[RMDB]
RNA sequence: GGGAACGACUCGAGUAGAGUCGAAAAAGCAUUUUAUAGUUUUAGCUCUUACAUUUAGGUCUGUGAUCCACUUUGAAUUAGUUUUUGUAUAUGGUGUAAGGAAGGUGUCCAACCUGAUUCUUUGCAGGUAGAUAUCCAAUUAUUUCAGUAUCAUAUGUCCUUUAAUGUGGUUCGCCACAUUAAAGGAAAAAGAAACAACAACAACAAC
Reactivity to DMS in 0.01 (KOAc 150mM, MgCl2 10mM, bicine 150mM(pH8.5), 24C), signal-to-noise 2, nucleotides 027 to 156: a060g030c040a090u010u010u000u000a110u020a080g000u010u000u010u000a140g020c030u000c020u000u000a080c050a100u000u000u000a050g000g000u000c020u000g030u000g000a090u010c000c010a070c050u000u000u000g010a080a070u010u000a090g010u000u000u000u000u000g010u000a050u020a070u000g000g040u000g030u010a060a080g010g030a130a100g010g000u010g030u000c020c020a080a090c010c010u000g000a110u000u000c170u000u000u000g020c010a010g000g020u000a020g010a060u000a030u010c020c020a060a110u000u000a100u010u000u000c050a080g030u000a050u000c070a110u000a060u010g010
Reactivity to 2A3 in 0.01 (KOAc 150mM, MgCl2 10mM, bicine 150mM(pH8.5), 24C), signal-to-noise 3, nucleotides 027 to 156: a000g060c060a050u100u060u150u160a140u180a120g060u010u000u070u080a020g000c010u030c050u070u110a100c020a140u080u080u120a020g030g000u000c080u060g090u050g040a090u080c020c010a060c070u100u100u140g110a120a090u110u060a070g040u010u050u000u000u110g050u030a020u000a010u130g080g000u000g020u010a010a050g010g040a030a030g000g000u000g000u010c010c010a040a030c020c010u030g040a110u130u170c080u120u090u200g060c010a000g000g000u010a020g020a020u060a010u040c010c010a040a060u080u070a060u040u140u020c010a020g090u060a010u070c010a010u110a070u160g070
The record gives the reactivity of an RNA of 207 nucleotides to DMS and 2A3. The reactions ran in a buffer of 150 mM KOAc, 10 mM MgCl2 and 150 mM bicine (pH 8.5), at 24 C. DMS adducts were read by reverse transcription with MarathonRT. The 2A3 profile rests on 1,391 reads.